[RMDB]
RNA sequence: GGGAACGACUCGAGUAGAGUCGAAAAGUUUACGCUCCAAGAUCGGUGGAUAGCAGCCCUAUCAAUAUCUAGGAGAACUGUGCUAUGUUUAGAAGAUUAGGUAGUCUCUAAACAGAAAAAUUUACCUCAUACGUUAGGACGUUCGCGUCCUAACGAACAUUCUCCUGACGUUCGCGUCAGGAGAAUGAAAAGAAACAACAACAACAAC
Reactivity to DMS in 0.01 (KOAc 150mM, MgCl2 10mM, bicine 150mM(pH8.5), 24C), signal-to-noise 1, nucleotides 027 to 156: g010u000u000u010a050c110g040c000u000c010c010a140a000g010a050u000c100g030g020u000g020g010a080u000a040g010c050a220g050c220c220c000u020a050u000c040a070a090u000a060u000c110u000a120g000g000a170g000a020a090c020u000g020u010g000c070u000a150u000g000u000u000u000a010g010a120a060g010a050u000u000a140g060g060u030a100g010u000c010u000c020u000a010a010a020c010a040g040a040a030a080a080a070u000u000u000a090c010c010u000c100a170u010a110c000g000u010u000a030g010g000a020c010g010u000u000c290g020c000g000u000c020c010u010a000a010c000g000a020a100
Reactivity to 2A3 in 0.01 (KOAc 150mM, MgCl2 10mM, bicine 150mM(pH8.5), 24C), signal-to-noise 5, nucleotides 027 to 156: g010u040u080u100a050c050g010c010u000c010c010a030a040g030a030u070c100g070g240u130g110g020a030u030a020g040c060a030g030c050c000c000u030a050u040c050a050a060u030a030u170c030u050a060g020g000a010g020a070a050c100u120g020u020g040c020u030a010u060g010u000u000u010a080g010a300a030g000a030u050u050a020g000g070u020a010g000u000c000u000c000u000a000a000a010c010a010g140a010a070a010a010a010u070u080u020a030c010c010u050c060a100u090a170c000g000u000u000a000g000g000a000c000g010u030u050c240g020c010g110u000c000c010u000a000a000c000g000a000a000
Source information
The data come from the RNA Mapping Database (RMDB), library M2RFPK. This 207-nucleotide RNA was probed chemically with DMS and 2A3. For 2A3, 4,486 sequencing reads were counted. For DMS the reverse transcriptase was MarathonRT.